[RMDB]
RNA sequence: GGGAACGACUCGAGUAGAGUCGAAAAUCGCGGAUAUCCUCGUCCGCCCGAUAUGCCAGCGCCGGUGCGCCGCACAUGUUCACGUCAGUCCACGUCUCGCGCACCCACAACCGAUCGCCGGGCUCGCUAUGAUCAGGCGAUUCGUCGCCUGAUCAUAAAAAGAAACAACAACAACAAC
Reactivity to DMS in 0.01 (KOAc 150mM, MgCl2 10mM, bicine 150mM(pH8.5), 24C), signal-to-noise 2, nucleotides 027 to 126: u010c130g010c040g010g010a070u000a080u020c050c040u010c090g010u010c000c020g020c020c090c010g010a090u000a070u000g010c050c080a130g010c050g030c070c070g000g020u000g040c060g020c030c030g030c040a060c120a010u010g010u010u010c070a030c170g000u010c100a110g010u000c050c030a070c050g000u000c030u010c120g050c080g020c050a090c020c020c070a060c080a020a090c040c070g000a070u000c030g010c040c010g000g000g010c040u000c060g010c160
Reactivity to 2A3 in 0.01 (KOAc 150mM, MgCl2 10mM, bicine 150mM(pH8.5), 24C), signal-to-noise 1, nucleotides 027 to 126: u040c030g040c000g000g000a000u010a120u100c040c050u090c050g000u000c020c010g040c010c010c010g000a050u080a050u210g040c080c050a050g000c020g050c030c040g110g050u060g000c020g010c000c000g030c000a000c000a030u110g110u160u070c100a040c100g050u040c060a050g040u030c030c020a000c070g070u010c060u060c060g050c000g130c030a020c030c060c060a070c000a020a050c030c030g040a030u070c030g050c110c020g020g000g010c020u030c010g000c010

Structure probing data (DMS and 2A3) for a 177-nucleotide construct.
Source: RMDB library OK2TST, as collected in RNAgym.
The DMS profile rests on 1,458 reads.
The reactions ran in a buffer of 150 mM KOAc, 10 mM MgCl2 and 150 mM bicine (pH 8.5), at 24 C.
Values cover nucleotides 27 to 126.
For DMS the reverse transcriptase was MarathonRT.
For 2A3 the reverse transcriptase was SuperScript II with manganese.